An RNA of 207 nucleotides, treated with 2A3 and read out base by base. Source: RMDB library M2RFPK, as collected in RNAgym. Conditions: 150 mM KOAc, 10 mM MgCl2 and 150 mM bicine (pH 8.5), 24 C. For 2A3 the reverse transcriptase was SuperScript II with manganese. Reactivities are given for positions 27 through 156.

RNA sequence: GGGAACGACUCGAGUAGAGUCGAAAAGUCCAAAAUUGAUUCGGCGGCCCUGUCAUGAGGCCGAAACGAAGGCACGUACCCCUGCGAAUGGCGUCGGGGAGUCAGCGGCUAUAUAUGCGCCUAAUGCUAAAGUCGUGCUGGUUCGCCAGCACGACAAGCAUCUAUCUUCCUUCGGGAAGAUAGAUGCAAAAGAAACAACAACAACAAC
Reactivity to 2A3 in 0.01 (KOAc 150mM, MgCl2 10mM, bicine 150mM(pH8.5), 24C), signal-to-noise 1, nucleotides 027 to 156: g040u040c010c000a080a080a000a000u130u220g040a050u080u020c000g030g020c000g010g020c090c000c050u020g300u300c120a060u100g030a070g040g000c000c000g030a000a000a000c020g000a040a000g000g000c010a000c100g000u030a010c020c010c000c020u000g050c050g090a170a160u230g110g010c030g060u050c010g060g000g010g000a000g060u050c000a010g040c040g020g000c040u010a000u010a000u040a040u300g040c000g040c010c050u150a160a060u200g050c120u150a030a070a020g000u000c000g010u000g010c010u010g010g010u010u000c150g060c040c000a000g000c000a000c010g000a000c000a000a000